[RMDB]
RNA sequence: GGGAACGACUCGAGUAGAGUCGAAAACAGAAAAGUCACUAUUCUUAUUGGAAAAAUGAAAAUCUCCUCUGUCCGAGAAUUACACAUAAUCACUAACAAAGGCUAACUACAAAUUCCUGCUGAAAUCUUCCUACUAUGGGAAUUAGUGUGACUGCAGUCACAGAACGUGUUUCGACACGUUCUGUGAAAAAGAAACAACAACAACAAC
Reactivity to DMS in 0.01 (KOAc 150mM, MgCl2 10mM, bicine 150mM(pH8.5), 24C), signal-to-noise 1, nucleotides 027 to 156: c060a160g000a080a080a120a170g020u000c010a020c050u000a160u000u010c030u000u010a080u000u010g000g030a030a050a110a080a150u010g000a030a090a120a140u000c020u010c000c040u010c070u000g010u000c050c070g000a070g010a140a040u000u000a180c120a040c070a080u000a120a100u000c040a130c040u000a070a050c060a010a070a090g030g000c070u000a030a090c040u000a140c100a040a040a210u000u010c080c030u000g000c050u000g030a060a070a060u010c110u000u020c010c000u010a030c020u000a070u010g000g000g020a040a090u000u000a050g040u000g050u000g010a090c040u000g000c050a090g000
Reactivity to 2A3 in 0.01 (KOAc 150mM, MgCl2 10mM, bicine 150mM(pH8.5), 24C), signal-to-noise 3, nucleotides 027 to 156: c020a010g170a040a140a020a000g030u020c010a010c040u070a130u080u030c030u100u120a100u090u140g030g070a090a030a050a040a050u110g040a060a100a110a170u080c100u020c010c030u060c080u120g040u000c020c010g030a030g010a050a030u110u170a040c080a000c010a080u190a080a070u150c060a040c170u070a140a000c040a090a060a020g030g020c010u040a030a000c020u090a070c050a030a100a010u070u020c000c010u030g040c020u020g020a020a090a160u030c050u020u010c030c010u060a160c020u080a130u170g030g000g000a020a000u070u030a070g040u020g000u010g020a010c010u040g000c030a020g040